[RMDB]
RNA sequence: GGGAACGACUCGAGUAGAGUCGAAAAGAUAUGGAGUUAUGGGAUCUUUCAUUAGGGAGCUCCGAUUGGGUCGGAAACGACCUAGAGGAGCAUCGAUCUAAUGAGAAGAUCCCAUAACUCCUAAGUCGAGCUAACUAUAGUUCGCUAUAGUUAGCUCAAAAGAAACAACAACAACAAC
Reactivity to DMS in 0.01 (KOAc 150mM, MgCl2 10mM, bicine 150mM(pH8.5), 24C), signal-to-noise 3, nucleotides 027 to 126: g000a090u010a300u000g000g000a010g000u000u000a000u000g000g010g000a020u000c010u000u000u000c000a020u000u000a010g000g000g010a050g020c000u000c010c000g000a300u000u010g020g000g000u000c000g000g000a100a090a210c020g010a020c010c000u000a020g010a300g000g000a020g020c010a170u000c170g010a050u010c000u000a000a020u000g000a060g010a060a030g000a000u000c010c000c000a000u000a000a000c010u000c010c000u000a000a050g000u010c070
Overview: Structure probing data (DMS) for a 177-nucleotide construct. For DMS the reverse transcriptase was MarathonRT. The DMS profile rests on 3,897 reads.